[RMDB]
RNA sequence: GGGAACGACUCGAGUAGAGUCGAAAAACCGAAGCGAGGAGGAAAGCAAAGAAAGCAACGGGGCUAGCAGGUGGGUGUUCCGCCUCCCGAGAGGGGACGAGUGAGGCUUAUCCCGGGGAACCCGGCGGACUACCUUAUUGUUCGCAAUAAGGUAGUCAAAAGAAACAACAACAACAAC
Reactivity to 2A3 in 0.01 (KOAc 150mM, MgCl2 10mM, bicine 150mM(pH8.5), 24C), signal-to-noise 1, nucleotides 027 to 126: a000c000c000g000a000a000g020c020g020a050g000g020a010g020g040a130a020a000g000c020a050a080a140g050a030a160a010g050c000a030a060c040g010g010g020g030c000u030a010g000c030a010g020g060u040g030g040g020u130g160u190u070c020c020g020c020c010u030c000c020c000g060a050g020a000g050g010g020g010a000c030g000a000g050u100g040a010g000g000c010u050u070a020u120c020c000c020g070g000g000g000a000a050c000c000c000g040g000c040g060
Reactivity to DMS in 0.01 (KOAc 150mM, MgCl2 10mM, bicine 150mM(pH8.5), 24C), signal-to-noise 2, nucleotides 027 to 126: a120c020c000g020a100a100g020c060g010a090g000g010a070g010g000a080a050a060g000c080a040a090a100g000a070a090a100g000c070a040a130c060g020g000g040g000c090u010a050g010c080a010g000g010u000g000g000g000u010g020u000u010c020c020g000c030c030u000c020c010c020g010a070g020a090g010g010g000g000a070c080g000a070g010u010g020a060g010g000c100u000u010a060u000c050c020c000g000g010g000g020a070a110c070c040c040g000g030c210g000

The record gives the reactivity of an RNA of 177 nucleotides to 2A3 and DMS. DMS adducts were read by reverse transcription with MarathonRT. Values are in units of 0.01, from 0 to 300, in steps of 10. For 2A3 the reverse transcriptase was SuperScript II with manganese.